Chemical mapping of a 177-nucleotide RNA with DMS and 2A3. DMS adducts were read by reverse transcription with MarathonRT. Values cover nucleotides 27 to 126. For 2A3, 1,571 sequencing reads were counted. Conditions: 150 mM KOAc, 10 mM MgCl2 and 150 mM bicine (pH 8.5), 24 C.

RNA sequence: GGGAACGACUCGAGUAGAGUCGAAAACACUAAAAUAACAUAGAUGAGAUAUUUCGCAUGAUAAUCUGUUGAUCUGGACACACUCUCCCUCUCGGGGCCAGAGAAAAAUCACAGCUUCAUUGUGUGGUCUCAGAGUGUCAUUCGUGACACUCUGAGAAAAAGAAACAACAACAACAAC
Reactivity to DMS in 0.01 (KOAc 150mM, MgCl2 10mM, bicine 150mM(pH8.5), 24C), signal-to-noise 2, nucleotides 027 to 126: c100a100c110u020a090a020a050a040u010a090a100c120a040u020a090g030a060u010g010a180g000a100u000a030u000u000u000c050g020c000a030u010g030a050u000a020a020u020c030u000g000u040u000g010a090u010c030u000g040g030a080c160a100c210a140c030u020c060u030c090c000c050u000c040u030c130g010g000g000g020c050c040a000g000a000g000a000a070a100a140a040u010c040a020c010a010g000c060u050u020c230a010u010u030g010u000g000u000g000g000
Reactivity to 2A3 in 0.01 (KOAc 150mM, MgCl2 10mM, bicine 150mM(pH8.5), 24C), signal-to-noise 3, nucleotides 027 to 126: c050a000c070u250a110a040a040a050u250a180a060c100a080u160a030g200a210u080g030a030g030a120u040a140u070u110u140c020g000c020a000u020g000a020u010a060a040u000c010u000g050u110u110g070a050u000c000u010g020g100a020c010a000c030a020c160u020c020u090c040c000c000u090c030u070c160g020g000g000g020c030c000a010g020a010g010a020a060a000a000a000u060c000a000c000a000g010c040u010u040c020a030u010u000g030u000g010u000g070g040
DMS (dimethyl sulfate) methylates the pairing face of unpaired adenines and cytosines.